[RMDB]
An RNA of 207 nucleotides, treated with DMS and 2A3 and read out base by base. DMS (dimethyl sulfate) methylates the pairing face of unpaired adenines and cytosines. Source: RMDB library OK3TST, as collected in RNAgym. The 2A3 profile rests on 2,221 reads.
RNA sequence: GGGAACGACUCGAGUAGAGUCGAAAAGAGUGUUAUGAAAAUGGUAAGCGCCGAUUUAUGACUCAAUAUAUUAACGGUAAUCGGUAUGGUUUAGGCACCGACACCGUUGAAUAUCACGAAAAUGGCCACAUCGCGCGUGAAUACAGAAUGUCAGCGCCACGUACCCAUGAUUCGUCAUGGGUACGUGAAAAGAAACAACAACAACAAC
Reactivity to DMS in 0.01 (KOAc 150mM, MgCl2 10mM, bicine 150mM(pH8.5), 24C), signal-to-noise 2, nucleotides 027 to 156: g070a170g020u000g000u000u000a160u000g000a040a080a110a090u010g000g000u000a050a280g020c070g000c000c030g050a160u000u000u000a060u010g000a030c030u010c080a030a070u000a070u000a090u000u000a020a030c000g020g010u000a190a030u000c000g000g030u000a050u010g040g010u000u000u000a120g010g030c130a040c000c010g010a010c080a050c000c000g000u000u030g000a060a060u000a030u000c060a070c040g010a020a030a060a150u000g000g010c010c010a030c080a040u020c010g010c050g070c030g040u000g000a060a090u000a300c070a040g000a100a090u000g000u000c010a100g010c060g020c010
Reactivity to 2A3 in 0.01 (KOAc 150mM, MgCl2 10mM, bicine 150mM(pH8.5), 24C), signal-to-noise 4, nucleotides 027 to 156: g090a010g040u080g000u060u150a100u100g110a060a060a010a100u090g030g040u120a120a080g070c040g000c090c030g000a020u030u040u040a170u140g030a050c040u020c140a110a020u060a000u020a050u070u020a010a030c010g020g010u030a080a120u010c000g000g030u040a070u140g060g100u050u130u240a110g050g060c050a020c000c010g000a010c010a010c040c000g000u000u000g020a010a000u040a020u040c050a020c120g060a050a000a080a140u120g040g000c030c010a040c010a050u020c020g000c000g000c030g040u050g010a020a040u180a080c050a040g110a110a070u110g090u110c020a010g010c020g000c000